Chemical mapping of a 177-nucleotide RNA with 2A3 and DMS. For 2A3, 31,397 sequencing reads were counted. The RNA was probed in 150 mM KOAc, 10 mM MgCl2 and 150 mM bicine (pH 8.5) at 24 C. It was measured as part of the RMDB library M2PK50.
RNA sequence: GGGAACGACUCGAGUAGAGUCGAAAAGACCUUCAGUUCGCUGAAGGUCGAUGAUGGUAAGAGAGAUUACCAUCUGUUAAGUGAUAUGGAUUAGAUCUCUCAGUGAACGUGCUUUCGAGCACGUUAAGAUUCAUAUGACUUUCGAGUCAUAUGAAUCAAAAGAAACAACAACAACAAC
Reactivity to 2A3 in 0.01 (KOAc 150mM, MgCl2 10mM, bicine 150mM(pH8.5), 24C), signal-to-noise 9, nucleotides 027 to 126: g000a000c000c000u000u000c010a020g000u020u110c150g010c110u000g010a000a000g000g000u000c000g000a000u020g000a000u000g000g050u060a110a010g010a000g000a000g000a020u000u020a010c000c010a000u000c020u010g100u080u170a180a140g100u080g200a110u070a090u300g200g030a100u120u130a090g020a070u010c000u000c000u000c030a020g080u050g210a020a000c000g010u000g000c000u090u080u150c250g060a000g000c000a000c000g000u000u000a000a010
Reactivity to DMS in 0.01 (KOAc 150mM, MgCl2 10mM, bicine 150mM(pH8.5), 24C), signal-to-noise 9, nucleotides 027 to 126: g000a000c000c000u000u000c000a000g010u000u020c230g030c000u000g010a010a000g010g010u000c000g000a030u000g000a030u000g000g010u010a030a170g000a030g000a020g000a030u000u000a030c020c020a020u000c000u000g000u000u010a080a110g010u010g010a100u010a090u000g010g010a150u010u000a140g000a020u000c000u000c000u000c010a230g010u010g010a030a010c000g010u000g000c000u000u000u010c190g010a010g010c000a000c000g010u000u000a040a100